About this RNA
Source: RMDB library TTRDEL, as collected in RNAgym. An RNA of 177 nucleotides, treated with 2A3 and DMS and read out base by base. Values cover nucleotides 27 to 126. For 2A3, 24,797 sequencing reads were counted. The reactions ran in a buffer of 150 mM KOAc, 10 mM MgCl2 and 150 mM bicine (pH 8.5), at 24 C. For DMS the reverse transcriptase was MarathonRT.
[RMDB]
RNA sequence: GGGAACGACUCGAGUAGAGUCGAAAAGAUAUGGAUAGGGACAUGCGUCUUGGUCGGAAACGACCAUGACGCAACAGCCCUGAUCCUAAGUCGCGCCUAACAUCGGCCUUCGGGCCGAUGUUAGGAAUCAUAACGAUAAGUUCGCUUAUCGUUAUGAAAAAGAAACAACAACAACAAC
Reactivity to 2A3 in 0.01 (KOAc 150mM, MgCl2 10mM, bicine 150mM(pH8.5), 24C), signal-to-noise 3, nucleotides 027 to 126: g010a010u060a020u140g010g000a000u010a020g000g010g020a040c110a200u070g000c000g000u010c000u010u000g010g000u000c010g030g030a080a070a070c010g000a000c010c000a000u000g000a000c000g000c000a000a000c010a000g020c000c000c000u020g030a010u000c000c000u000a120a030g060u020c020g000c020g030c090c000u000a000a000c000a000u010c000g010g020c020c000u090u180c280g070g000g000c000c000g000a000u000g000u000u000a000g000g000a000a010
Reactivity to DMS in 0.01 (KOAc 150mM, MgCl2 10mM, bicine 150mM(pH8.5), 24C), signal-to-noise 9, nucleotides 027 to 126: g000a040u000a300u010g000g000a010u000a050g000g010g010a030c050a210u000g000c000g000u000c000u000u000g010g000u000c000g000g000a080a070a200c000g010a010c000c000a010u000g000a010c000g010c000a000a010c210a140g000c000c000c000u000g000a020u000c000c000u010a040a140g000u000c020g010c270g010c010c000u000a000a010c000a000u000c000g000g000c000c000u000u010c220g030g000g030c000c000g010a000u000g000u000u000a000g000g000a020a020